[RMDB]
RNA sequence: GGGAACGACUCGAGUAGAGUCGAAAAGACAUGUGCUUUGGGCAUUUGUUCCUCCUUGAUCCUCCCAGGGCUGGCAACGUGGAUUGCAGUUUGUCCCAAGGGUUCUAGCAGGCCACUUGGCUGCUGCCCACCAACUUUUACAUAAAGAUGCGUGGAAUACGUGCCGUAAUUUCGAUUACGGCACGUAAAAAGAAACAACAACAACAAC
Reactivity to 2A3 in 0.01 (KOAc 150mM, MgCl2 10mM, bicine 150mM(pH8.5), 24C), signal-to-noise 1, nucleotides 027 to 156: g030a000c030a040u040g000u000g000c010u030u120u090g130g030g000c030a060u120u030u150g000u040u060c060c140u040c030c000u050u090g010a050u160c040c010u040c050c000c060a040g030g000g060c030u010g080g000c040a170a060c090g060u140g090g000a230u160u160g040c000a000g000u040u300u300g030u100c010c000c000a050a060g100g000g000u130u170c080u000a040g000c080a100g000g060c050c000a300c060u040u180g000g040c020u000g000c000u000g000c110c000c000a000c050c000a040a010c010u060u220u110u220a180c060a120u300a060a000a050g040a040u050g240c200g060u000g030g000a000a110
Record summary: Source: RMDB library OK3TST, as collected in RNAgym. An RNA of 207 nucleotides, treated with 2A3 and read out base by base. The RNA was probed in 150 mM KOAc, 10 mM MgCl2 and 150 mM bicine (pH 8.5) at 24 C. Reactivities are rounded to 0.1 and cut off at 0 and 3. For 2A3, 272 sequencing reads were counted.